[RMDB]
RNA sequence: GGGAACGACUCGAGUAGAGUCGAAAAGAUAUGGAUCCUAGGUGACAUGGCAACUGUCGGAAACGAUUUGCCAACAGCACCGGGAUCCUAAGUCAAACCUUAAGAACCGUUCGCGGUUCUUAAGGAACUUUUUUAACCUGUUCGCAGGUUAAAAAAGAAAAGAAACAACAACAACAAC
Reactivity to DMS in 0.01 (KOAc 150mM, MgCl2 10mM, bicine 150mM(pH8.5), 24C), signal-to-noise 3, nucleotides 027 to 126: g010a050u000a210u010g010g000a000u000c000c010u000a080g070g010u000g000a100c100a190u000g020g010c000a000a020c300u010g020u000c010g020g000a040a030a070c000g020a040u000u010u000g000c000c010a040a070c210a200g000c010a010c010c000g000g000g000a010u000c000c000u010a000a040g000u000c010a120a140a260c000c000u010u000a010a000g020a000a030c000c000g020u000u020c190g020c000g000g010u000u010c000u000u000a000a000g010g010a010a020
Reactivity to 2A3 in 0.01 (KOAc 150mM, MgCl2 10mM, bicine 150mM(pH8.5), 24C), signal-to-noise 2, nucleotides 027 to 126: g000a010u020a050u090g010g000a010u000c020c010u100a300g020g000u040g070a280c130a260u030g010g000c000a070a030c240u250g080u090c000g000g000a000a020a000c000g040a030u020u000u010g000c000c010a040a010c170a060g040c030a020c000c000g020g000g000a000u000c000c000u020a040a020g010u020c050a070a060a200c020c000u000u020a000a000g020a000a010c020c010g040u040u090c300g000c040g150g000u000u000c010u000u000a000a010g000g000a000a000